[RMDB]
This 177-nucleotide RNA was probed chemically with 2A3 and DMS.
The data come from the RNA Mapping Database (RMDB), library VIROID.
The reactions ran in a buffer of 150 mM KOAc, 10 mM MgCl2 and 150 mM bicine (pH 8.5), at 24 C.
Reactivities are rounded to 0.1 and cut off at 0 and 3.
DMS adducts were read by reverse transcription with MarathonRT.
High DMS reactivity at an A or C suggests that its Watson-Crick edge is free.
RNA sequence: GGGAACGACUCGAGUAGAGUCGAAAAGCAGUUCCGAUGGAAAGGCUAAGAACCUCGCAACGAGGUAAGGUGGGACUUUUCCUUCUGGAACCAAGCGGUUGGUUCCGAGGGGGGUGUGAUCCAGGUACAUUAAUUUCUUCUUCGGAAGAAAUUAAUGAAAAGAAACAACAACAACAAC
Reactivity to 2A3 in 0.01 (KOAc 150mM, MgCl2 10mM, bicine 150mM(pH8.5), 24C), signal-to-noise 2, nucleotides 027 to 126: g010c030a030g020u050u000c020c000g110a120u080g000g030a020a060a020g030g020c040u070a110a050g060a150a060c000c010u000c030g040c090a190a130c150g020a010g000g000u040a030a010g060g020u100g010g000g030a050c000u080u040u040u030c020c000u010u020c110u220g000g000a010a000c000c000a040a060g130c090g150g100u090u050g030g000u000u070c000c000g000a010g000g020g020g000g000g010u040g000u020g010a020u000c020c030a050g090g000u010a010
Reactivity to DMS in 0.01 (KOAc 150mM, MgCl2 10mM, bicine 150mM(pH8.5), 24C), signal-to-noise 4, nucleotides 027 to 126: g010c060a050g000u000u000c020c020g010a110u010g010g000a030a040a040g000g020c040u010a150a110g010a110a060c020c010u000c020g010c200a130a100c140g010a010g010g010u010a040a050g000g010u010g010g000g010a090c050u000u000u010u010c000c010u000u010c030u010g030g010a020a000c000c010a030a060g010c190g010g010u010u000g000g000u000u000c000c010g010a030g000g000g010g020g000g010u000g010u000g010a080u010c030c050a090g000g020u000a130